Background
An RNA of 177 nucleotides, treated with DMS and 2A3 and read out base by base. The RNA was probed in 150 mM KOAc, 10 mM MgCl2 and 150 mM bicine (pH 8.5) at 24 C. For DMS the reverse transcriptase was MarathonRT.
RNA sequence: GGGAACGACUCGAGUAGAGUCGAAAACGUCGUGAACUAGCGACAAUGCGGUAGAUCCAUCGUUAUCUAACCGAAACAUCGUGACUAGUCGUAGAAUAGAACCAGGAGAGGGCGCUGGCAAACAAAGACGGGGUGUAUGAUUCGUCGUACGCCCCGUAAAAGAAACAACAACAACAAC
Reactivity to DMS in 0.01 (KOAc 150mM, MgCl2 10mM, bicine 150mM(pH8.5), 24C), signal-to-noise 9, nucleotides 027 to 126: c110g010u010c040g020u020g010a130a080c070u010a070g010c050g000a040c070a120a070u020g010c010g000g010u010a020g000a020u000c080c080a100u030c220g010u030u010a030u000c020u000a060a060c020c010g000a110a090a180c140a110u000c060g010u010g010a100c030u010a030g010u000c030g000u020a070g010a050a060u010a080g010a080a080c040c030a070g010g000a070g000a060g000g010g010c030g020c010u000g000g010c070a050a050a070c140a050a090a110g000
Reactivity to 2A3 in 0.01 (KOAc 150mM, MgCl2 10mM, bicine 150mM(pH8.5), 24C), signal-to-noise 9, nucleotides 027 to 126: c040g020u010c010g020u030g060a090a040c040u010a030g010c000g030a010c040a020a060u190g020c010g000g000u020a010g000a060u010c060c030a200u100c180g110u140u060a020u010c010u020a040a140c010c000g020a030a020a010c050a040u050c030g030u040g050a060c030u010a010g020u010c020g030u030a030g030a080a030u070a050g030a040a030c010c020a020g010g040a080g010a030g010g010g000c010g000c000u000g010g000c000a030a040a040c050a030a100a000g110

It was measured as part of the RMDB library OK1LIB.